[RMDB]
RNA sequence: GGGAACGACUCGAGUAGAGUCGAAAAUGCAGCACCAGGAAGAAGGCGCCUGAGCUCCCCUCGCGACGAGUCAACCGCAGUAGGAGGUGGGGGCGAAGAGAGGGCUGAACCCGUCCGCUGCCCGGGCGUAUCUCCUCAUAUUCGUAUGAGGAGAUACAAAAGAAACAACAACAACAAC
Reactivity to DMS in 0.01 (KOAc 150mM, MgCl2 10mM, bicine 150mM(pH8.5), 24C), signal-to-noise 7, nucleotides 027 to 126: u010g010c030a030g010c030a150c100c100a140g020g010a080a090g010a120a180g000g010c060g020c010c010u010g000a300g010c030u000c010c010c010c010u000c030g010c050g010a100c070g010a090g000u010c130a100a110c130c070g000c050a100g020u000a090g020g000a080g010g020u010g010g000g010g000g020c050g010a100a070g000a100g000a110g000g010g000c030u010g000a070a120c030c010c010g000u000c070c100g000c050u000g000c030c110c010g010g000g020c240
Reactivity to 2A3 in 0.01 (KOAc 150mM, MgCl2 10mM, bicine 150mM(pH8.5), 24C), signal-to-noise 6, nucleotides 027 to 126: u120g010c010a010g000c010a040c070c020a040g060g030a040a070g050a040a040g040g000c070g080c050c010u040g020a020g010c010u020c010c010c000c000u000c020g130c020g050a130c020g020a030g110u120c050a050a080c060c030g030c050a040g040u150a070g060g150a010g030g040u130g050g050g010g010g010c010g030a080a000g100a010g020a030g020g120g000c020u020g010a020a030c000c000c010g010u040c030c050g010c020u030g000c000c000c010g060g020g000c050